[RMDB]
RNA sequence: GGGAACGACUCGAGUAGAGUCGAAAAUGUCUCUGUUACCUAGUGAUGUGACCUGGGGCAAGUUUCCUGACCUCUCUGACAUUCAGUUGUCCUUUCAAGGAAGGAUUAGCAUCCUUCGAAGAAUUAGCCACCUCUGCCCAAAUCACAAGAUGGGUUAGCUAAUACCGGGAUUCGUCCCGGUAUUAGCAAAAGAAACAACAACAACAAC
Reactivity to 2A3 in 0.01 (KOAc 150mM, MgCl2 10mM, bicine 150mM(pH8.5), 24C), signal-to-noise 1, nucleotides 027 to 156: u050g000u020c000u010c030u050g050u090u090a040c000c010u080a200g010u080g250a210u080g040u020g050a010c140c150u100g000g000g000g000c000a020a070g030u020u020u020c020c000u050g200a090c000c000u010c010u010c030u050g000a090c040a110u140u000c020a110g140u100u050g070u020c000c020u130u110u010c080a150a030g090g030a010a010g000g000a000u050u050a070g020c020a020u000c010c000u000u000c000g070a060a030g010a100a020u180u130a010g000c040c000a050c000c010u000c000u020g000c000c000c080a080a080a080u180c070a070c020a040a000g010a100u030g000g000g000u040u090a010